[RMDB]
RNA sequence: GGGAACGACUCGAGUAGAGUCGAAAAGAAAAGACGAUGUUAUUAUGAUUCUCGAGUAAUAGCAGGUCAAGCGUACUACUCGCCGAACGGAAGGCGGACUGUUCGCGUAAUGAAACGAGAAAGAAAAGCUAGUACUACCUUUCGAGGUAGUACUAGCAAAAGAAACAACAACAACAAC
Reactivity to DMS in 0.01 (KOAc 150mM, MgCl2 10mM, bicine 150mM(pH8.5), 24C), signal-to-noise 2, nucleotides 027 to 126: g020a070a050a160a130g030a020c010g000a060u000g030u000u000a010u010u010a000u000g010a070u000u000c030u000c040g010a190g030u020a020a030u000a000g000c050a000g040g060u000c020a200a110g020c030g000u010a060c030u000a090c000u000c000g030c000c000g020a110a030c080g010g010a130a220g040g000c000g000g000a040c190u000g000u000u020c010g000c050g000u060a100a130u020g020a080a110a150c000g010a000g000a010a140a120g000a070a120a160a160
Reactivity to 2A3 in 0.01 (KOAc 150mM, MgCl2 10mM, bicine 150mM(pH8.5), 24C), signal-to-noise 4, nucleotides 027 to 126: g080a010a150a000a000g040a000c050g100a140u010g000u010u000a020u010u000a020u060g080a140u050u000c000u000c000g010a020g000u000a000a020u030a020g000c000a000g010g070u080c160a090a030g010c010g020u010a000c000u000a000c020u010c020g000c000c010g060a160a060c100g110g050a100a030g020g000c010g020g000a020c040u050g000u060u140c000g000c010g070u110a100a130u210g130a060a010a060c030g000a000g060a030a130a000g100a020a120a010a010

The record gives the reactivity of an RNA of 177 nucleotides to DMS and 2A3. The reactions ran in a buffer of 150 mM KOAc, 10 mM MgCl2 and 150 mM bicine (pH 8.5), at 24 C. It was measured as part of the RMDB library OK1LIB. For DMS, 2,240 sequencing reads were counted. Reactivities are given for positions 27 through 126.